[RMDB]
RNA sequence: GGGAACGACUCGAGUAGAGUCGAAAACAGAGUAGCCUCAUCAGUGCCCUUGCAGUCUGACUGUGUACACUUGGUUCAGCUAAUGUCUGAGAGUCCUGCACUGGGUUACUUUAUACUAGUGAGGACGUUAACCAGCCAUAUUGGCUCAAUAAAUAGACUAUCACCACUGGUUCGCCAGUGGUGAUAGAAAAGAAACAACAACAACAAC
Reactivity to DMS in 0.01 (KOAc 150mM, MgCl2 10mM, bicine 150mM(pH8.5), 24C), signal-to-noise 1, nucleotides 027 to 156: c050a160g010a140g030u020a070g010c030c040u000c050a070u000c030a060g020u000g000c020c160c020u040u000g000c010a030g000u010c120u010g020a090c010u000g060u000g030u010a080c060a080c020u000u010g070g000u000u000c080a170g000c050u000a070a030u010g010u000c000u000g010a190g010a140g020u000c010c040u000g010c000a020c050u010g000g020g020u000u000a050c180u040u030u020a120u010a230c040u000a040g080u010g000a020g030g010a050c030g000u000u010a100a030c050c040a050g000c000c000a050u000a210u010u000g010g020c040u010c050a020a060u020a040a090a120u010a150g000a220
Reactivity to 2A3 in 0.01 (KOAc 150mM, MgCl2 10mM, bicine 150mM(pH8.5), 24C), signal-to-noise 3, nucleotides 027 to 156: c010a000g070a000g140u110a020g130c020c040u070c020a120u090c080a000g040u010g010c000c000c020u010u010g030c000a030g010u060c090u050g050a070c000u010g000u020g050u250a030c020a040c080u090u130g040g020u120u050c050a030g000c060u090a180a000u070g030u020c020u030g030a010g000a000g090u000c010c000u090g060c000a020c070u000g000g010g000u060u040a010c000u030u040u090a170u020a080c030u060a050g010u000g000a000g000g000a000c000g000u020u020a000a040c020c000a010g020c000c040a110u130a170u300u290g000g030c000u040c020a080a110u190a200a050a090u300a170g050a000

Overview:
Conditions: 150 mM KOAc, 10 mM MgCl2 and 150 mM bicine (pH 8.5), 24 C. The record gives the reactivity of an RNA of 207 nucleotides to DMS and 2A3. Values cover nucleotides 27 to 156. Source: RMDB library OK3TST, as collected in RNAgym. The 2A3 profile rests on 976 reads.